Structure probing data (DMS and 2A3) for a 177-nucleotide construct.
For 2A3 the reverse transcriptase was SuperScript II with manganese.
The data come from the RNA Mapping Database (RMDB), library M2PK90.
Values cover nucleotides 27 to 126.
For 2A3, 7,692 sequencing reads were counted.
DMS adducts were read by reverse transcription with MarathonRT.

[RMDB]
RNA sequence: GGGAACGACUCGAGUAGAGUCGAAAACGUCUUAAAUUAAAUUUCCCUUGCUGAGCUCAUCUCUGCAAACAAUAACAAAUAACAAAUAAGAACAGCAGGGAAGGUUGUUCUUAUUUGUUACAAUUAAACCUUAACACAUGUUCGCAUGUGUUAAGGUAAAAGAAACAACAACAACAAC
Reactivity to DMS in 0.01 (KOAc 150mM, MgCl2 10mM, bicine 150mM(pH8.5), 24C), signal-to-noise 2, nucleotides 027 to 126: c240g010u000c060u010u020a050a070a100u010u020a050a150a210u000u000u000c010c010c020u000u000g000c010u000g010a030g000c300u020c230a080u020c020u000c010u000g010c040a020a070a090c160a050a040u030a060a070c070a080a140a170u010a010a000c000a000a010a000u000a010a000g000a020a000c000a020g000c010a020g010g020g010a060a070g010g010u000u000g000u000u000c000u000u000a000u000u000u000g000u000u010a010c120a090a050u000u000a080a130
Reactivity to 2A3 in 0.01 (KOAc 150mM, MgCl2 10mM, bicine 150mM(pH8.5), 24C), signal-to-noise 5, nucleotides 027 to 126: c030g080u040c060u140u220a180a190a180u100u120a070a110a150u060u140u050c000c000c000u010u020g000c010u020g010a010g020c050u040c140a180u100c110u000c010u030g000c020a010a010a050c030a050a100u220a080a040c050a070a130a020u060a020a010c000a000a000a010u010a000a000g010a000a000c000a000g010c010a010g170g060g100a040a040g110g000u020u010g000u020u000c000u010u000a010u000u010u010g000u000u010a000c000a000a010u070u090a110a110
The DMS profile rests on 1,283 reads.